[RMDB]
The record gives the reactivity of an RNA of 177 nucleotides to 2A3 and DMS. Conditions: 150 mM KOAc, 10 mM MgCl2 and 150 mM bicine (pH 8.5), 24 C.
RNA sequence: GGGAACGACUCGAGUAGAGUCGAAAAUCUUUGGCUUUCGAGCCAAAGAGUGGGAGCAAUGUCCUUUAAGCACCAAACACGGAAAAACCGUGAAAGGACAAAAAAAUCACAGUUUCGACUGUGAUAAUAGCCUAAUUUCAUUCGUGAAAUUAGGCUAAAAAGAAACAACAACAACAAC
Reactivity to 2A3 in 0.01 (KOAc 150mM, MgCl2 10mM, bicine 150mM(pH8.5), 24C), signal-to-noise 2, nucleotides 027 to 126: u010c000u000u000u000g000g000c000u120u050u100c270g140a000g000c020c030a000a000a000g020a020g000u090g050g030g040a200g030c060a050a250u090g000u000c010c000u010u030u050a080a000g060c000a030c040c000a020a100a000c000a010c010g030g070a170a150a030a110a040c000c000g010u000g000a010a010a010g000g000a000c000a000a120a010a010a000a000a000u000c010a000c000a010g000u010u070u130c190g060a010c010u000g000u000g000a000u010a010a050
Reactivity to DMS in 0.01 (KOAc 150mM, MgCl2 10mM, bicine 150mM(pH8.5), 24C), signal-to-noise 2, nucleotides 027 to 126: u010c030u000u000u000g000g000c000u010u000u000c090g000a000g070c010c000a000a000a030g000a020g000u000g050g000g010a150g010c110a110a090u000g010u000c000c010u000u000u000a110a240g000c050a250c000c010a070a120a300c020a000c010g000g000a130a150a020a230a160c000c000g000u000g000a030a060a000g000g010a010c020a010a000a030a060a050a120a060u000c000a010c000a000g000u000u000u000c140g020a060c000u000g000u010g030a000u000a040a060